This 177-nucleotide RNA was probed chemically with DMS and 2A3.
Values cover nucleotides 27 to 126.
For DMS, 6,692 sequencing reads were counted.
For 2A3, 4,664 sequencing reads were counted.
Conditions: 150 mM KOAc, 10 mM MgCl2 and 150 mM bicine (pH 8.5), 24 C.
RNA sequence: GGGAACGACUCGAGUAGAGUCGAAAACUCUACUAGUGGGAUACCACGCUUGUGGACCUUAUGCCCACACAGCCAUCCUCUAGUAAGUUUGUAAGACGUCUGAUGACGUGUGGGAAAACACUAGAAACUACUUCAUAGAGUUCGCUCUAUGAAGUAGAAAAGAAACAACAACAACAAC
Reactivity to DMS in 0.01 (KOAc 150mM, MgCl2 10mM, bicine 150mM(pH8.5), 24C), signal-to-noise 6, nucleotides 027 to 126: c020u000c110u000a070c000u000a020g020u010g000g000g010a090u010a100c120c100a070c260g010c080u000u000g030u000g000g010a050c020c290u000u000a100u010g020c010c000c000a010c000a030c180a030g030c010c160a040u000c010c030u000c020u000a030g000u010a050a060g000u000u000u000g000u010a160a120g000a040c020g010u000c020u000g010a160u010g010a010c020g020u000g020u000g020g010g010a070a050a080a100c050a040c060u010a070g010a140a110a150
Reactivity to 2A3 in 0.01 (KOAc 150mM, MgCl2 10mM, bicine 150mM(pH8.5), 24C), signal-to-noise 2, nucleotides 027 to 126: c010u050c040u020a030c010u010a000g020u090g030g040g010a020u040a130c020c070a050c100g050c060u060u150g010u000g010g010a030c010c050u170u140a160u300g020c010c020c000a000c000a010c030a010g000c000c020a010u020c000c000u000c000u020a030g030u030a050a060g010u020u060u080g120u090a070a020g080a030c010g010u000c080u160g290a170u260g000a040c010g030u070g020u040g060g050g050a050a080a040a010c040a010c030u050a040g060a020a050a030